This 177-nucleotide RNA was probed chemically with DMS and 2A3. It was measured as part of the RMDB library OK2TRN. 2A3 adducts were read by reverse transcription with SuperScript II with manganese. Reactivities are given for positions 27 through 126.
RNA sequence: GGGAACGACUCGAGUAGAGUCGAAAACUGCCACAGCCACACAGCGGCAUUGGUGCACCAUUUGACCGGCCAGACAAUCACGAUAGAGAAGAUUCUGCCGCUGCAGAGAUACCCGCUGUGGAUGUGAACUUACCAGGACGUUCGCGUCCUGGUAAGUAAAAGAAACAACAACAACAAC
Reactivity to DMS in 0.01 (KOAc 150mM, MgCl2 10mM, bicine 150mM(pH8.5), 24C), signal-to-noise 2, nucleotides 027 to 126: c000u010g010c070c020a020c010a020g000c080c120a180c140a150c010a000g070c010g000g010c070a100u010u000g000g020u000g000c100a110c090c060a100u020u000u010g010a100c200c050g000g000c050c060a100g020a080c100a060a050u000c040a090c080g010a150u000a070g010a090g000a120a120g000a070u020u000c090u000g010c010c050g000c050u000g010c010a020g000a130g050a210u000a100c070c040c080g000c030u010g010u000g000g000a060u030g020u000g000a100
Reactivity to 2A3 in 0.01 (KOAc 150mM, MgCl2 10mM, bicine 150mM(pH8.5), 24C), signal-to-noise 1, nucleotides 027 to 126: c020u070g050c010c000a020c010a040g010c020c000a110c010a020c000a050g020c010g020g010c000a000u000u120g060g040u110g010c040a070c080c020a100u070u040u170g070a060c010c060g030g020c060c010a050g030a160c070a060a050u030c000a020c100g120a110u220a210g130a010g080a200a060g020a050u030u050c020u060g000c000c030g000c000u000g000c030a040g000a020g000a110u140a090c020c040c000g000c000u020g010u010g000g010a030u060g030u030g030a030